[RMDB]
Chemical mapping of a 177-nucleotide RNA with DMS and 2A3. Conditions: 150 mM KOAc, 10 mM MgCl2 and 150 mM bicine (pH 8.5), 24 C.
RNA sequence: GGGAACGACUCGAGUAGAGUCGAAAAACGGUUGCCAGACAGAUGAGGAUGUCGCCAAGACUCUUGGGCUCGUCGUCUUGGCUGAGUUGGAGAAAGGGAUCGUCUGGCUCCUCCUCCAGGGUGAAGGUACUCUGCGUGAAUUCGUUCACGCAGAGUAAAAAGAAACAACAACAACAAC
Reactivity to DMS in 0.01 (KOAc 150mM, MgCl2 10mM, bicine 150mM(pH8.5), 24C), signal-to-noise 1, nucleotides 027 to 126: a110c130g010g010u000u010g010c000c000a010g010a020c020a140g020a050u000g020a110g010g010a090u000g020u000c090g000c010c020a010a040g010a080c060u000c080u040u020g020g010g000c050u000c030g000u000c090g010u000c010u010u010g010g000c000u010g000a070g010u000u000g000g000a090g000a030a080a080g000g020g000a050u010c060g000u000c010u000g000g020c010u000c010c020u000c070c010u000c020c050a070g010g000g010u000g020a130a120g000g000
Reactivity to 2A3 in 0.01 (KOAc 150mM, MgCl2 10mM, bicine 150mM(pH8.5), 24C), signal-to-noise 1, nucleotides 027 to 126: a010c050g030g000u090u110g000c020c000a000g000a040c030a030g090a050u110g020a080g110g000a050u110g080u220c020g030c020c000a020a020g050a120c040u030c070u210u120g080g030g000c050u030c050g120u020c020g030u000c010u010u040g000g050c090u040g030a010g010u110u020g040g040a100g090a110a150a040g110g000g000a030u040c030g010u000c010u010g000g010c010u000c000c000u000c010c010u010c000c000a010g120g010g000u130g050a100a010g040g020